[RMDB]
RNA sequence: GGGAACGACUCGAGUAGAGUCGAAAAGAUAUGGAUGUGAACUACAGCGGAUGGCUCGACGAAGGCCCUUUCACUUCGGAAACGAAGUGAAAGGGCCAGAGAGCCUGCCUGCUGCACAUCCUAAGUCCAUUGAACAUAUGUUCGCAUAUGUUCAAUGAAAAGAAACAACAACAACAAC
Reactivity to DMS in 0.01 (KOAc 150mM, MgCl2 10mM, bicine 150mM(pH8.5), 24C), signal-to-noise 3, nucleotides 027 to 126: g010a090u020a300u000g010g000a010u010g010u000g000a120a080c090u020a300c010a030g010c010g010g000a300u000g000g020c000u000c010g000a180c290g010a130a100g000g060c020c000c010u000u010u000c000a020c000u000u030c000g020g000a110a080a260c010g030a040a020g020u020g010a010a020a030g000g000g110c000c000a000g010a050g000a010g030c010c010u010g020c130c000u010g000c010u000g000c010a010c000a000u000c000c000u010a030a080g000u010c060
Reactivity to 2A3 in 0.01 (KOAc 150mM, MgCl2 10mM, bicine 150mM(pH8.5), 24C), signal-to-noise 2, nucleotides 027 to 126: g050a020u060a040u200g010g000a000u000g040u020g050a100a120c120u240a110c300a010g010c020g100g000a070u100g030g000c020u060c020g300a300c110g120a300a200g030g070c050c050c100u040u070u040c030a020c020u000u000c050g020g000a120a070a040c000g020a000a120g040u020g030a010a000a000g020g000g000c000c040a020g000a000g000a000g000c010c010u000g030c000c010u060g010c000u010g000c010a010c000a000u000c000c000u010a100a000g010u000c010

This 177-nucleotide RNA was probed chemically with DMS and 2A3. For 2A3 the reverse transcriptase was SuperScript II with manganese. It was measured as part of the RMDB library TTRINS. For DMS the reverse transcriptase was MarathonRT. The RNA was probed in 150 mM KOAc, 10 mM MgCl2 and 150 mM bicine (pH 8.5) at 24 C. Reactivities are given for positions 27 through 126.